[RMDB]
RNA sequence: GGGAACGACUCGAGUAGAGUCGAAAAUGGACUUUUUACAGUUCCUACUUAUCCGGUUUUAACGCUGUUUUAUUGGCGCAAAGGUUUACCGAUAAACAACUAAUAAUUAAACCUUUUGUGUGCGAAAAUUGGACGUUUAGGUUCGCCUAAACGUCAACAAGAGAAGUAUGUUCGCAUACUUCUCUUGAAAAGAAACAACAACAACAAC
Reactivity to 2A3 in 0.01 (KOAc 150mM, MgCl2 10mM, bicine 150mM(pH8.5), 24C), signal-to-noise 4, nucleotides 027 to 156: u100g020g010a010c000u060u090u060u120u220a090c170a060g020u090u100c010c010u030a070c030u100u100a060u080c040c010g100g040u030u040u000u130a090a030c090g020c040u040g100u080u070u050u110a130u120u200g040g000c000g010c000a010a010a000g000g000u010u020u020a020c030c000g060a060u150a130a190a030c080a070a020c080u200a130a130u090a140a040u180u050a020a010a000c000c000u030u040u080u060g070u000g020u060g080c050g080a060a020a060a110u090u110g120g020a000c000g010u000u000u000a000g000g010u040u030c170g090c020c000u000a000a000a000c000g000u000c000a000a000
Reactivity to DMS in 0.01 (KOAc 150mM, MgCl2 10mM, bicine 150mM(pH8.5), 24C), signal-to-noise 2, nucleotides 027 to 156: u000g020g020a080c040u000u000u020u010u020a160c100a110g000u010u000c010c020u000a170c080u010u010a090u020c060c060g020g010u000u000u010u000a110a140c030g010c060u000g000u010u000u000u000a090u020u020g000g000c000g000c060a080a070a080g040g010u000u000u000a080c040c020g010a070u000a030a030a140c030a050a130c040u000a100a110u010a120a130u000u000a010a030a020c000c010u000u000u000u010g020u010g000u010g020c010g000a080a070a080a180u000u000g010g000a020c010g000u000u000u000a000g010g020u000u010c300g030c010c010u010a000a020a010c000g010u000c000a000a070

An RNA of 207 nucleotides, treated with 2A3 and DMS and read out base by base. For 2A3, 1,920 sequencing reads were counted. Conditions: 150 mM KOAc, 10 mM MgCl2 and 150 mM bicine (pH 8.5), 24 C. For DMS the reverse transcriptase was MarathonRT.